The data come from the RNA Mapping Database (RMDB), library TTRDES. The record gives the reactivity of an RNA of 177 nucleotides to DMS.

RNA sequence: GGGAACGACUCGAGUAGAGUCGAAAAGAUAUGGAGCUCGAAGAACAGGACCCUUCGCGUGUCGGAAACGACACUGAAUGAAGCCUGGGAGAGCUCCUAAGUCAAAGCCCGGUGUUCGCACCGGGCAUCAGGACCUAAUGUUCGCAUUAGGUCCUGAAAAAGAAACAACAACAACAAC
Reactivity to DMS in 0.01 (KOAc 150mM, MgCl2 10mM, bicine 150mM(pH8.5), 24C), signal-to-noise 1, nucleotides 027 to 126: g000a050u040a300u000g000g020a020g010c000u000c000g040a060a190g020a100a290c000a010g000g000a130c160c200c060u000u000c010g000c260g010u010g040u000c000g000g010a110a040a170c000g020a030c000a000c000u000g020a030a020u010g000a060a110g000c000c020u000g010g000g000a250g000a040g010c000u000c000c020u000a000a120g000u000c070a160a230a200g000c000c000c000g010g000u000g010u010u010c210g000c020a020c000c000g030g000g030c000a000